[RMDB]
RNA sequence: GGGAACGACUCGAGUAGAGUCGAAAAGGUUCGAGAUUCGUCUCGAACCAAAUAAAAUCAGCGGUAAAUAAUUUGCUCCCGUUACCGCUGAACGGGAGCAUAUGGUCACUUGUUUCGACAAGUGAAACUGCUCAUUAUUGUUCGCAAUAAUGAGCAGAAAAGAAACAACAACAACAAC
Reactivity to 2A3 in 0.01 (KOAc 150mM, MgCl2 10mM, bicine 150mM(pH8.5), 24C), signal-to-noise 3, nucleotides 027 to 126: g000g000u000u000c000g000a000g000a030u010u100c140g060u010c110u000c010g000a000a010c000c000a000a000a000u030a000a000a000a030u030c000a000g020c010g130g260u230a070a090a030u080a020a090u060u060u260g010c000u000c000c000c000g000u000u020a170c010c010g010c000u010g000a000a010c000g010g020g010a000g000c000a010u080a060u080g210g030u010c000a000c000u010u030g020u040u120u060c130g130a020c000a010a000g010u000g010a010a010a000
Reactivity to DMS in 0.01 (KOAc 150mM, MgCl2 10mM, bicine 150mM(pH8.5), 24C), signal-to-noise 2, nucleotides 027 to 126: g010g020u010u000c000g010a000g000a020u000u030c230g020u000c010u000c000g020a000a000c000c000a000a060a030u000a050a050a140a100u000c020a000g000c000g020g030u000a070a060a060u010a050a050u010u010u000g000c000u000c010c000c030g010u010u000a080c040c030g000c030u010g020a000a010c000g000g000g000a040g030c010a080u010a010u000g000g010u000c000a000c000u010u000g010u000u000u010c170g020a020c000a020a010g010u000g000a000a050a190

Source: RMDB library M2PK50, as collected in RNAgym. The record gives the reactivity of an RNA of 177 nucleotides to 2A3 and DMS. For DMS, 2,032 sequencing reads were counted. For 2A3 the reverse transcriptase was SuperScript II with manganese. Values are in units of 0.01, from 0 to 300, in steps of 10.